Structure probing data (2A3 and DMS) for a 177-nucleotide construct. Conditions: 150 mM KOAc, 10 mM MgCl2 and 150 mM bicine (pH 8.5), 24 C. Values are in units of 0.01, from 0 to 300, in steps of 10.
[RMDB]
RNA sequence: GGGAACGACUCGAGUAGAGUCGAAAAGAUCUUGAGGAAAAGGGGAAGCGUUAAAAACAGUUAUCAAUAUAGAAUGUAUAAAUUGUAUGUAAAUCAACAUUUUGUUUGUGUUUUGGAGUAAAUGCGGCAAAGGUUCGGUUUUCGAACCGAACCUUUGAAAAGAAACAACAACAACAAC
Reactivity to 2A3 in 0.01 (KOAc 150mM, MgCl2 10mM, bicine 150mM(pH8.5), 24C), signal-to-noise 2, nucleotides 027 to 126: g040a020u010c090u080u030g060a120g050g000a000a000a000a060g020g000g000g000a010a020g020c090g040u020u020a000a110a000a000a000c000a020g000u070u110a080u290c010a010a000u140a000u040a120g080a100a060u120g020u130a050u130a140a110a140u100u090g020u030a110u110g070u080a130a140a000u130c010a030a090c040a040u060u060u000u040g090u010u000u010g100u020g030u030u070u010u040g040g000a030g000u150a010a000a140u120g010c010g000g010
Reactivity to DMS in 0.01 (KOAc 150mM, MgCl2 10mM, bicine 150mM(pH8.5), 24C), signal-to-noise 2, nucleotides 027 to 126: g010a080u010c030u010u000g020a180g020g000a010a010a040a030g010g000g050g010a070a110g030c100g010u010u010a030a030a020a060a060c040a100g000u010u050a050u000c030a030a080u000a060u010a060g000a050a040u000g000u010a060u020a030a060a050u010u000g000u010a060u040g020u000a050a000a040u040c070a030a010c040a050u000u010u000u010g000u000u000u000g020u000g030u000u000u040u000g010g020a070g060u000a030a020a010u020g010c070g000g010